[RMDB]
An RNA of 307 nucleotides, treated with 2A3 and DMS and read out base by base. It was measured as part of the RMDB library POS240.

RNA sequence: GGGAACGACUCGAGUAGAGUCGAAAACCCACGUACGAAAGUACGAAGAGCUAAUCUACGGAUUAGCUCAAGAAGAGGUCGUGAGACCUCUUCAACCAGAGUCUUCGGACUCUGGAACUUCCCAACUGCCUCACAAGGACAUUCAUGGCAACCGUAAUUCAUCCUCGCCCUCUGAUGAACUUGCUGGGCAGGAAGCAUCAGUAUGAGUAACAGGCAGAUCUUAAUGUUGCUCUUGACCAAUGACAAGUUUUCUGGCCAUCCAGGCAAGAGCUGAGUUCGCUCAGCUCAAAAGAAACAACAACAACAAC
Reactivity to 2A3 in 0.01 (KOAc 150mM, MgCl2 10mM, bicine 150mM(pH8.5), 24C), signal-to-noise 4, nucleotides 027 to 266: c010c000c010a000c010g000u010a000c010g020a180a030a080g000u000a000c000g000a100a020g010a000g000c000u000a010a000u000c000u010a010c220g050g010a000u000u000a000g000c000u010c000a000a010g000a000a000g010a000g010g000u020c010g020u040g070a080g000a020c000c010u000c000u000u000c000a000a000c000c000a000g000a000g020u000c000u120u200c260g130g010a000c000u000c000u010g000g010a010a050c020u080u050c040c050c020a120a090c050u020g010c010c010u140c020a020c000a010a020g030g030a060c020a070u050u080c050a020u160g010g010c040a070a060c040c040g140u150a170a140u210u170c060a120u190c070c080u120c110g000c010c000c010u000c010u000g020a020u010g010a030a020c000u010u030g010c040u030g030g010g000c000a000g000g000a020a000g040c030a060u070c050a030g090u150a140u200g020a010g010u040a020a000c020a020g080g100c050a040g090a260u090c120u130u220a100a080u140g000u020u010g020c000u030c000u030u080g040a020c060c020a090a160u120g090a090c050a130a080g020u050u060u100u090c040u050g020g000c000c020a040u110c040c060a120g020g020c030a060a060
Reactivity to DMS in 0.01 (KOAc 150mM, MgCl2 10mM, bicine 150mM(pH8.5), 24C), signal-to-noise 3, nucleotides 027 to 266: c000c000c000a300c000g010u010a010c000g000a190a090a150g000u000a000c010g020a130a120g010a000g000c000u010a010a010u010c000u000a090c210g000g000a030u000u000a000g000c000u000c000a040a040g020a020a010g010a020g000g010u000c000g010u020g000a120g010a000c010c000u000c010u010u000c000a130a250c000c000a010g000a020g000u010c000u000u020c210g030g000a020c000u000c000u000g000g000a070a130c170u000u000c020c030c020a180a240c040u000g010c000c000u010c170a130c060a030a030g010g010a140c060a030u000u000c050a040u030g000g000c020a060a150c300c190g010u000a080a060u020u020c140a020u030c080c030u010c300g000c000c010c000u000c030u000g000a030u010g010a100a170c040u000u010g010c110u010g000g000g000c040a000g010g010a070a060g000c050a070u000c060a040g010u030a040u000g000a020g020u000a020a040c050a010g000g000c180a080g010a070u000c110u010u000a120a070u000g000u000u000g000c020u000c000u000u000g000a060c080c060a100a060u000g000a080c130a080a100g000u010u010u000u000c020u000g000g000c050c030a140u000c130c170a090g000g000c050a070a100

Conditions: 150 mM KOAc, 10 mM MgCl2 and 150 mM bicine (pH 8.5), 24 C.
For 2A3, 5,236 sequencing reads were counted.
Values cover nucleotides 27 to 266.